[RMDB]
RNA sequence: GGGAACGACUCGAGUAGAGUCGAAAAUUCAUCACGUCGUUUAUUCGGUUGAUAACGAAACACCGUCCUGCUCAGCGAUAACGUCCUGCAUGCCUGGCGUAUGCUCAUCGUAAACUGCGUGGUCAGACUCAAAGAACUUCUUCGGAAGUUCUUUGAGAAAAGAAACAACAACAACAAC
Reactivity to DMS in 0.01 (KOAc 150mM, MgCl2 10mM, bicine 150mM(pH8.5), 24C), signal-to-noise 2, nucleotides 027 to 126: u020u000c080a030u020c020a060c060g000u000c190g020u000u010u000a050u010u010c030g000g020u020u000g020a090u010a090a100c090g000a110a050a070c100a050c090c040g020u000c020c020u000g030c050u010c050a130g040c070g010a060u000a050a120c070g010u000c040c020u000g020c110a030u000g000c060c000u010g020g000c040g000u000a050u000g020c090u010c020a080u000c070g000u000a000a030a050c020u000g000c000g000u000g010g010u000c130a110g000a150
Reactivity to 2A3 in 0.01 (KOAc 150mM, MgCl2 10mM, bicine 150mM(pH8.5), 24C), signal-to-noise 2, nucleotides 027 to 126: u020u000c010a000u040c000a000c020g030u060c000g020u000u000u070a110u070u120c020g060g000u030u110g060a070u050a140a070c080g060a120a050a000c050a020c050c000g000u030c010c000u050g010c020u010c030a050g000c050g040a030u040a190a020c020g090u050c010c000u010g030c030a040u100g010c030c010u020g040g020c030g030u030a050u080g040c010u010c010a040u050c010g040u040a020a030a060c030u040g010c030g020u030g010g040u040c020a020g050a050
Chemical mapping of a 177-nucleotide RNA with DMS and 2A3. For DMS the reverse transcriptase was MarathonRT. For 2A3, 1,858 sequencing reads were counted. For 2A3 the reverse transcriptase was SuperScript II with manganese. Conditions: 150 mM KOAc, 10 mM MgCl2 and 150 mM bicine (pH 8.5), 24 C. It was measured as part of the RMDB library RFMREP. The DMS profile rests on 1,642 reads.